Source: RMDB library OK3TST, as collected in RNAgym. The record gives the reactivity of an RNA of 207 nucleotides to 2A3. For 2A3 the reverse transcriptase was SuperScript II with manganese. The 2A3 profile rests on 304 reads.
RNA sequence: GGGAACGACUCGAGUAGAGUCGAAAAUUUAACAAAAAGUGCUAUUCUAUAACUUCCUUUUGAACGACCUUGAUCUCAUCAAAGAAGAUAUUCCUGUCAUUCUCAGUGAGAUUCUUGAUCUCGUUAGCUUUGCUCUCGGUUGAGCAUAUCUCGAUCAGCUCCAAAAAUGGUUCGCCAUUUUUGGAGCAAAAGAAACAACAACAACAAC
Reactivity to 2A3 in 0.01 (KOAc 150mM, MgCl2 10mM, bicine 150mM(pH8.5), 24C), signal-to-noise 1, nucleotides 027 to 156: u110u040u050a090a070c060a100a210a080a000a000g120u050g010c030u040a050u110u280c030u120a070u020a230a250c010u020u000c080c000u150u050u060u300g190a000a010c020g000a050c070c020u000u000g000a000u030c000u020c040a150u090c010a290a300a080g000a000a000g030a000u010a130u040u160c030c090u200g010u000c050a190u100u000c010u000c000a010g000u000g010a010g000a000u110u060c030u030u020g040a070u090c000u000c000g000u000u010a030g000c040u100u000u010g000c000u030c000u030c070g180g000u000u150g010a000g000c000a050u030a070u110c080u040c060g160a050u190c040a010